Conditions: 150 mM KOAc, 10 mM MgCl2 and 150 mM bicine (pH 8.5), 24 C. The record gives the reactivity of an RNA of 207 nucleotides to 2A3 and DMS. DMS adducts were read by reverse transcription with MarathonRT.
RNA sequence: GGGAACGACUCGAGUAGAGUCGAAAACGCUGGGAUUCCAGAGCAUGGACCGACGAUCAGCUGAAGCGCGCACGGCUGGGAGGUCAUGCGACGAAGGAAUCCUGUGCUGAAGCGCGCACGGCAACCGAAAGGUGCGAAUAUCCGUUUCGACGGAUAACAUUAAUGGAUGUUUCGACAUCCAUUAAUGAAAAGAAACAACAACAACAAC
Reactivity to 2A3 in 0.01 (KOAc 150mM, MgCl2 10mM, bicine 150mM(pH8.5), 24C), signal-to-noise 8, nucleotides 027 to 156: c020g000c000u010g000g000g000a010u000u000c000c000a030g020a080g110c000a010u070g160g110a160c010c000g130a250c020g010a040u030c000a000g000c000u020g060a220a020g020c000g000c000g000c010a010c020g010g000c000u010g000g000g020a020g000g000u000c000a000u000g060c010g060a070c070g160a290a270g000g000a000a000u000c000c000u010g000u010g000c000u020g020a150a050g000c000g000c000g000c010a000c010g000g000c010a010a020c000c000g040a080a030a030g010g000u010g000c010g010a080a020u070a020u070c000c000g000u040u090u140c200g110a030c010g010g000a000u020a050a050
Reactivity to DMS in 0.01 (KOAc 150mM, MgCl2 10mM, bicine 150mM(pH8.5), 24C), signal-to-noise 4, nucleotides 027 to 156: c040g020c010u030g020g020g030a050u010u000c000c020a260g010a260g010c020a040u000g030g010a040c000c010g000a110c210g020a110u010c010a030g040c020u010g020a040a030g030c020g040c030g010c010a300c050g020g000c010u000g030g000g010a090g020g030u000c010a000u000g020c010g020a200c140g010a190a150g030g010a040a040u000c010c000u010g010u000g040c000u000g000a060a070g020c010g040c010g040c010a300c030g010g010c010a090a090c030c000g010a100a160a180g040g030u000g010c010g000a090a140u000a050u000c000c000g020u000u000u000c240g020a120c010g010g000a030u000a040a230